[RMDB]
RNA sequence: GGGAACGACUCGAGUAGAGUCGAAAACUAGCUAGUCUAGGAUCUGCUCAUGCAUGUCUAGGUACAUGCGUGCGAUCGCACUAGGCGAUCGUACCUAGCAUGAGCCAUGGGUACGAUCUAGAGUCUAGACAUACGCAGCUUUCGAGCUGCGUAUGUCAAAAGAAACAACAACAACAAC
Reactivity to DMS in 0.01 (KOAc 150mM, MgCl2 10mM, bicine 150mM(pH8.5), 24C), signal-to-noise 2, nucleotides 027 to 126: c020u000a040g000c110u000a080g000u010c000u010a180g000g010a020u000c010u000g020c000u000c000a020u010g040c020a020u000g000u010c010u000a020g000g000u000a030c060a100u030g000c090g010u000g020c050g020a030u000c010g020c010a140c240u000a110g010g000c000g010a010u000c000g020u000a010c000c010u000a000g000c010a020u000g010a300g040c280c050a020u010g020g000g030u000a020c130g000a000u000c000u010a040g000a060g010u000c020u000a050
Reactivity to 2A3 in 0.01 (KOAc 150mM, MgCl2 10mM, bicine 150mM(pH8.5), 24C), signal-to-noise 2, nucleotides 027 to 126: c030u020a010g100c040u060a040g070u020c020u010a030g090g120a050u000c000u010g010c010u020c010a000u020g000c010a000u000g100u090c020u020a020g000g010u050a050c040a070u130g110c020g080u080g000c020g020a040u020c020g040c020a070c160u220a110g210g150c010g010a010u000c040g000u010a020c000c000u000a020g000c000a000u030g050a060g220c030c010a030u030g000g040g010u050a040c260g000a010u010c000u010a050g020a000g060u050c030u050a020